[RMDB]
RNA sequence: GGGAACGACUCGAGUAGAGUCGAAAAAAUGACAUUUGUUGGAAUGUAAGCAGACACAUCAUCGGCCUGUGUUUCUAUGACUAGCAAAGCAGUCAAGGAGCCACCACCAAAAGCAUCAUUCAUUUUGGCUGCUCUCUCCAGCAACCGGGAGUAUAGAGCCUAUUAUUACGUUCGCGUAAUAAUAGGCAAAAGAAACAACAACAACAAC
Reactivity to 2A3 in 0.01 (KOAc 150mM, MgCl2 10mM, bicine 150mM(pH8.5), 24C), signal-to-noise 3, nucleotides 027 to 156: a020a000u220g020a050c080a090u080u040u030g000u000u030g010g030a100a050u090g030u120a010a090g020c000a000g060a060c030a020c020a180u110c040a070u160c080g040g040c050c040u100g040u000g030u040u060u000c030u050a200u050g020a030c010u020a020g020c060a070a180a090g020c010a020g010u020c000a010a020g000g010a000g010c000c030a010c030c000a020c000c040a030a060a030a000g040c040a070u120c020a030u240u140c040a070u030u030u060u040g000g000c000u020g010c000u000c000u020c010u000c020c010a030g000c000a030a010c030c070g040g000g000a050g060u030a070u060a120g120a020
Reactivity to DMS in 0.01 (KOAc 150mM, MgCl2 10mM, bicine 150mM(pH8.5), 24C), signal-to-noise 2, nucleotides 027 to 156: a080a110u010g050a120c060a150u030u030u020g020u000u000g000g000a160a120u020g010u020a090a090g050c030a040g000a030c040a060c120a110u050c100a090u020c070g020g060c040c000u010g040u010g010u000u000u000c050u000a140u000g020a090c050u000a070g010c080a090a120a240g000c260a100g010u000c020a070a180g010g010a080g020c030c050a040c050c040a100c050c040a010a040a030a110g030c070a080u010c050a140u000u000c080a180u000u000u000u000g000g020c000u000g000c000u000c010u000c050u010c020c000a120g010c020a070a050c100c030g020g030g020a100g010u000a100u000a080g020a300

The record gives the reactivity of an RNA of 207 nucleotides to 2A3 and DMS. The data come from the RNA Mapping Database (RMDB), library OK3TST. Conditions: 150 mM KOAc, 10 mM MgCl2 and 150 mM bicine (pH 8.5), 24 C.